[RMDB]
RNA sequence: GGGAACGACUCGAGUAGAGUCGAAAAGAUAUGGAUCCUUAUAGGACAUGACGCGUCAAACUGAAUACGUGCUUCGGAAACGAAGUUAUUCAGUUUGACGCGUCAACAGCCUAUGGGAUCCUAAGUCCUCUUCUCUUCAGUUCGCUGAAGAGAAGAGAAAAGAAACAACAACAACAAC
Reactivity to DMS in 0.01 (KOAc 150mM, MgCl2 10mM, bicine 150mM(pH8.5), 24C), signal-to-noise 1, nucleotides 027 to 126: g010a110u000a300u010g000g010a000u000c000c010u000u020a070u000a000g030g010a080c050a300u010g000a020c000g000c010g010u000c080a030a020a000c000u000g000a010a020u000a060c300g010u010g000c000u000u010c000g000g000a060a120a300c020g000a000a070g040u000u010a010u000u010c000a000g000u000u000u000g020a010c010g000c040g000u010c000a000a060c300a100g000c000c010u000a060u000g010g010g000a010u000c000c000u010a020a120g000u000c050
Chemical mapping of a 177-nucleotide RNA with DMS. It was measured as part of the RMDB library TTRINS. The reactions ran in a buffer of 150 mM KOAc, 10 mM MgCl2 and 150 mM bicine (pH 8.5), at 24 C. For DMS, 843 sequencing reads were counted. Values cover nucleotides 27 to 126.